[RMDB]
RNA sequence: GGGAACGACUCGAGUAGAGUCGAAAACGUCCGGUCAUUUAAGGGAGCCAGGCGACCUAAACGGUCGUGUCAUAUGUAGGCACCAGGUGCCUUCUCCCUGUGGCAAACCGCAGGCUCGGAGGGUCCGUCAACGCAUGCGCUUCGGUGCGUGCGUUGAAAAAGAAACAACAACAACAAC
Reactivity to DMS in 0.01 (KOAc 150mM, MgCl2 10mM, bicine 150mM(pH8.5), 24C), signal-to-noise 2, nucleotides 027 to 126: c110g010u000c040c000g010g010u000c000a060u030u020u030a080a040g010g000g000a090g000c210c090a120g020g000c030g010a010c020c000u000a030a110a220c190g020g010u010c020g020u000g020u000c100a070u030a080u020g000u010a060g010g010c000a020c010c190a190g030g010u000g030c000c010u010u000c010u010c070c010c000u010g000u020g000g000c090a050a080a300c060c070g000c300a230g000g000c070u000c200g000g000a180g000g000g000u010c000c000g000

This 177-nucleotide RNA was probed chemically with DMS.
Conditions: 150 mM KOAc, 10 mM MgCl2 and 150 mM bicine (pH 8.5), 24 C.
Values are in units of 0.01, from 0 to 300, in steps of 10.
The DMS profile rests on 3,680 reads.